An RNA of 170 nucleotides, treated with 2A3 and DMS and read out base by base.
The DMS profile rests on 25,054 reads.
The reactions ran in a buffer of 150 mM KOAc, 10 mM MgCl2 and 150 mM bicine (pH 8.5), at 24 C.
For 2A3 the reverse transcriptase was SuperScript II with manganese.
For DMS the reverse transcriptase was MarathonRT.
RNA sequence: GGGAACGACUCGAGUAGAGUCGAAAAGAGGAGUAAGACCAUAGCGAUGGAAAGAGAUGCUAGGAGUAGGGAGAGACCGAAGCGAGGAGGAAAGCAAAGAAAGCAACGGGGCUAGCCGGUGGGUGUUAGGGACUGCAGUUCGCUGCAGUCAAAAGAAACAACAACAACAAC
Reactivity to 2A3 in 0.01 (KOAc 150mM, MgCl2 10mM, bicine 150mM(pH8.5), 24C), signal-to-noise 5, nucleotides 027 to 129: g030a010g020g020a020g020u140a100a020g020a060c020c020a070u090a030g060c070g050a070u120g030g070a060a040a020g050a020g020a020u090g020c040u050a030g000g030a030g020u120a070g050g030g000a020g000a000g020a010c010c000g020a020a010g030c020g020a010g000g000a000g000g030a050a020a010g030c070a020a040a070g080a010a060a000g050c030a020a070c080g040g000g020g000c040u020a020g020c000c010g040g000u030g020g010g000u040g020u050u130a100g000g000
Reactivity to DMS in 0.01 (KOAc 150mM, MgCl2 10mM, bicine 150mM(pH8.5), 24C), signal-to-noise 5, nucleotides 027 to 129: g000a020g040g030a070g000u000a070a060g000a090c040c040a090u060a050g040c050g040a090u040g000g000a080a020a000g040a010g020a060u040g010c140u050a000g000g000a070g030u030a040g050g000g020a080g020a090g040a070c040c020g030a010a080g000c150g030a040g030g020a050g040g000a010a030a040g020c150a050a040a080g010a050a060a060g000c100a060a100c160g070g010g000g000c030u030a090g000c000c030g010g040u030g030g010g000u000g000u060u070a080g000g010
Source: RMDB library 15KLIB, as collected in RNAgym.